[RMDB]
RNA sequence: GGGAACGACUCGAGUAGAGUCGAAAAGCGAUGCGUGAGAUGUCUGGUCGUUUGGAGGAGAUUCCUGGUGAAGAGGCCUUCCCAGCCUACCUUGAGUCCACCAUUGCCGGCUUCUAUGAGCGCGCGGCGCGGAUCUAACAUUCGUGUUAGAUCCGCGAAAAGAAACAACAACAACAAC
Reactivity to 2A3 in 0.01 (KOAc 150mM, MgCl2 10mM, bicine 150mM(pH8.5), 24C), signal-to-noise 2, nucleotides 027 to 126: g070c010g070a080u110g020c030g020u070g090a030g000a020u020g070u080c090u180g010g040u150c160g160u050u000u040g070g020a150g020g110a260g010a100u050u000c000c010u020g000g000u060g040a230a160g190a040g180g000c000c000u030u020c010c010c020a010g010c000c000u000a020c010c020u000u010g010a000g030u000c000c010a020c000c020a030u000u220g020c010c010g030g040c000u010u000c020u070a150u210g100a070g020c000g030c000g000c000g030g040
Reactivity to DMS in 0.01 (KOAc 150mM, MgCl2 10mM, bicine 150mM(pH8.5), 24C), signal-to-noise 2, nucleotides 027 to 126: g020c040g010a080u000g030c030g000u000g030a040g010a020u000g010u020c000u010g010g020u000c170g010u000u010u010g010g010a150g010g010a110g000a030u000u000c000c010u000g010g020u000g020a130a120g020a030g000g000c020c010u000u000c010c010c020a300g010c030c010u000a020c020c010u010u000g000a060g020u000c010c020a110c000c010a030u010u010g000c000c030g010g000c030u010u000c020u000a100u000g000a180g000c020g010c020g020c030g010g020